[RMDB]
RNA sequence: GGGAACGACUCGAGUAGAGUCGAAAAGAAAGAAAGAACCGUUCCCGCGGGGCUGGAUCUUCCAGAUGGUGCGGGCCGGGACAAGCCGGAGAGUGUCCCGGUUUCAGAAACAACCUUCGGCAGCCAAACUAGACUACCCACUUCGGUGGGUAGUCAAGGACAUAACAAAGUUCGCUUUGUUAUGUCCAAAAGAAACAACAACAACAAC
Reactivity to 2A3 in 0.01 (KOAc 150mM, MgCl2 10mM, bicine 150mM(pH8.5), 24C), signal-to-noise 3, nucleotides 027 to 156: g020a000a030a000g030a020a050a000g040a200a110c020c000g000u020u030c000c000c000g000c010g020g000g000g000c010u000g020g030a130u150c060u170u060c130c010a010g000a030u030g000g030u050g010c020g000g000g000c000c000g000g000g000a000c000a000a000g010c000c000g000g010a000g000a010g010u000g000u000c000c000c000g000g010u010u010u030c010a010g000a000a030a010c040a020a000c010c000u000u010c000g020g010c000a060g040c050c050a060a070a100c070u090a050g000a010c000u000a000c000c010c000a010c020u040u030c130g040g000u000g000g000g000u000a000g000u000c000a000a000